Conditions: 150 mM KOAc, 10 mM MgCl2 and 150 mM bicine (pH 8.5), 24 C.
An RNA of 177 nucleotides, treated with 2A3 and DMS and read out base by base.
2A3 adducts were read by reverse transcription with SuperScript II with manganese.
Reactivities are given for positions 27 through 126.
Values are in units of 0.01, from 0 to 300, in steps of 10.
DMS adducts were read by reverse transcription with MarathonRT.
For DMS, 81,505 sequencing reads were counted.
RNA sequence: GGGAACGACUCGAGUAGAGUCGAAAACGUCGUGAACUAGCGACAAUGCCGUAGAUCGAUCGUUAUCUAACCGAAACAUCGUGACUAGUCGUAGAAUAGAACCAGGAGAGGUCGCUGCCAAACAAAGACGAUAUCUCAGAUUCGUCUGAGGUAUCGUAAAAGAAACAACAACAACAAC
Reactivity to 2A3 in 0.01 (KOAc 150mM, MgCl2 10mM, bicine 150mM(pH8.5), 24C), signal-to-noise 9, nucleotides 027 to 126: c050g020u010c010g020u040g070a120a070c050u030a080g010c000g020a010c000a020a060u170g040c020c010g050u070a040g010a100u040c020g000a010u010c090g020u030u030a150u090c050u050a050a110c060c040g020a030a020a010c020a030u030c020g030u030g050a050c030u030a020g050u060c040g060u060a020g050a130a060u090a060g050a040a030c030c020a030g020g060a060g020a020g010g030u010c010g000c030u030g010c020c000a050a090a080c040a040a120a010g120
Reactivity to DMS in 0.01 (KOAc 150mM, MgCl2 10mM, bicine 150mM(pH8.5), 24C), signal-to-noise 9, nucleotides 027 to 126: c140g010u000c020g010u010g010a130a120c110u010a080g010c010g010a020c020a110a090u030g010c040c030g010u020a080g000a110u010c020g000a040u000c140g000u000u000a090u010c040u010a100a130c220c110g000a050a040a060c070a030u010c020g010u010g000a140c080u010a050g000u010c050g020u020a060g000a060a080u020a070g010a090a120c080c050a080g000g000a070g010a060g000g010u000c030g010c020u000g000c030c050a050a060a080c180a050a080a080g000